Chemical mapping of a 177-nucleotide RNA with DMS and 2A3. The reactions ran in a buffer of 150 mM KOAc, 10 mM MgCl2 and 150 mM bicine (pH 8.5), at 24 C.
[RMDB]
RNA sequence: GGGAACGACUCGAGUAGAGUCGAAAAACGGAUGGUACGCCAUCCGAAAGGGAUGAUGAGUUUUUCCCUCACUCUGAGCCGUGAUGAGGAGCCGAUGCUCUGACCUACGGCUCGUACGCGAGCCGAACACACAAUAUUUAUUCGUAAAUAUUGUGUGAAAAGAAACAACAACAACAAC
Reactivity to DMS in 0.01 (KOAc 150mM, MgCl2 10mM, bicine 150mM(pH8.5), 24C), signal-to-noise 9, nucleotides 027 to 126: a100c020g000g010a020u000g010g010u010a090c260g030c010c000a000u000c000c000g000a010a040a070g010g010g010a040u010g010a130u010g000a100g010u000u000u010u000u000c000c010c000u010c090a070c050u000c050u010g000a020g010c010c010g020u000g010a040u000g000a300g000g000a020g010c010c300g010a110u030g010c000u000c010u010g000a290c210c040u000a030c010g000g000c000u000c000g010u010a010c140g010c060g000a040g010c050c030g000a100a210
Reactivity to 2A3 in 0.01 (KOAc 150mM, MgCl2 10mM, bicine 150mM(pH8.5), 24C), signal-to-noise 9, nucleotides 027 to 126: a000c010g000g000a010u010g000g020u060a040c270g050c030c000a000u000c000c000g020a060a030a000g070g020g020a070u090g020a030u090g040a080g090u040u020u010u050u020c000c010c000u010c010a020c010u020c040u090g040a020g000c020c010g030u040g030a120u070g030a040g020g010a010g010c050c100g170a080u300g000c020u000c010u030g060a110c000c010u040a040c000g000g000c000u000c000g000u020a010c070g010c030g020a010g020c020c020g120a170a010

In probing experiments dimethyl sulfate is read out at A N1 and C N3, which are open when not base-paired.